[RMDB]
Structure probing data (2A3 and DMS) for a 177-nucleotide construct.
Reactivities are rounded to 0.1 and cut off at 0 and 3.
Reactivities are given for positions 27 through 126.
For DMS, 2,023 sequencing reads were counted.

RNA sequence: GGGAACGACUCGAGUAGAGUCGAAAAACUUGUCGAGCAACCGGCGGUCCUUCUCGUCCUGCCGGUCGUGCUGGUAGGCCUCAACCUGGUCGGCUACCCACUCUUCAAGCAACCGGUCCUGCAGGGCGGCCAUCUAUGUAUUCGUACAUAGAUGGCCAAAAGAAACAACAACAACAAC
Reactivity to 2A3 in 0.01 (KOAc 150mM, MgCl2 10mM, bicine 150mM(pH8.5), 24C), signal-to-noise 2, nucleotides 027 to 126: a000c040u090u130g050u030c030g000a010g040c020a000a020c030c000g010g020c000g010g000u030c030c000u180u080c120u060c060g030u020c000c040u110g020c020c040g000g010u010c030g010u040g000c040u040g000g020u040a060g030g090c000c030u100c040a090a140c030c030u050g020g060u090c040g050g020c010u040a040c000c010c010a040c000u030c030u120u070c070a100a060g020c020a110a080c050c000g000g040u050c010c000u050g020c060a040g000g050g000c030
Reactivity to DMS in 0.01 (KOAc 150mM, MgCl2 10mM, bicine 150mM(pH8.5), 24C), signal-to-noise 2, nucleotides 027 to 126: a100c030u000u000g040u000c020g010a030g020c060a100a070c050c020g000g000c000g000g000u000c040c110u000u000c100u010c130g000u000c030c010u010g010c000c030g000g010u000c030g000u000g050c050u000g010g010u000a060g010g000c020c050u010c120a090a130c120c070u000g020g000u000c050g000g000c070u000a040c030c030c070a130c070u010c050u000u010c110a080a050g000c050a110a090c100c050g000g020u020c030c030u010g020c060a040g010g000g050c140
The data come from the RNA Mapping Database (RMDB), library OK2TST. DMS adducts were read by reverse transcription with MarathonRT.